[RMDB]
RNA sequence: GGGAACGACUCGAGUAGAGUCGAAAAUGGUAGGUAUCGAUGGUGUCUCAAUUCUCUCCACUACUUAGGAUGAGGAACAUUUCUGCCACACGUGAAAAAGUAGUACUGUGUGGAGACGCCAUCGCAAGGGUUAAUCUUACUUCGGUAAGAUUAACCCAAAAGAAACAACAACAACAAC
Reactivity to 2A3 in 0.01 (KOAc 150mM, MgCl2 10mM, bicine 150mM(pH8.5), 24C), signal-to-noise 3, nucleotides 027 to 126: u150g080g020u090a030g120g100u130a070u120c020g010a000u000g000g020u000g010u010c000u000c030a050a140u090u000c020u000c010u030c020c030a080c140u260a020c040u110u120a080g010g050a090u230g010a020g010g000a010a000c020a090u120u200u050c090u090g110c030c000a000c010a000c030g090u070g120a100a050a050a020a030g140u120a030g060u030a050c060u090g020u020g010u020g040g000a000g000a000c000g000c000c000a000u000c000g000c000a000a030
Reactivity to DMS in 0.01 (KOAc 150mM, MgCl2 10mM, bicine 150mM(pH8.5), 24C), signal-to-noise 2, nucleotides 027 to 126: u020g040g030u000a060g000g020u010a030u030c000g000a000u000g000g000u010g000u000c000u010c090a140a170u000u000c000u000c000u020c000c040a120c140u030a110c110u070u010a170g000g020a030u000g000a010g000g010a040a130c170a100u010u020u020c110u020g010c090c010a040c050a020c030g000u000g000a050a080a100a170a100g020u000a080g020u020a120c230u030g000u010g000u000g010g010a030g000a010c020g000c020c010a000u010c000g000c300a130a040